[RMDB]
RNA sequence: GGGAACGACUCGAGUAGAGUCGAAAACUAUCAGUCACCUUGAGGUAUUAUUAAUAGACUGUCUCCAAUAAUCGCAGAUUUGUUGCAAUAAUAACCACAAUUAACGGCCCGGCUCAAAACCAGCGCAUAAAGAGCGAGUAUUCGUACUCGCUCUUUAAAAAGAAACAACAACAACAAC
Reactivity to DMS in 0.01 (KOAc 150mM, MgCl2 10mM, bicine 150mM(pH8.5), 24C), signal-to-noise 1, nucleotides 027 to 126: c070u020a020u000c050a040g020u020c030a070c030c050u000u000g040a040g030g000u000a060u000u000a050u040u020a050a140u000a180g020a020c040u000g000u000c020u020c060c040a110a170u010a060a060u020c150g060c130a060g010a110u000u010u000g010u020u000g000c140a070a090u000a100a010u000a080a070c040c060a040c020a020a040u000u030a090a110c100g020g000c020c040c000g000g030c020u010c070a080a040a160a090c040c020a070g020c080g000c100a100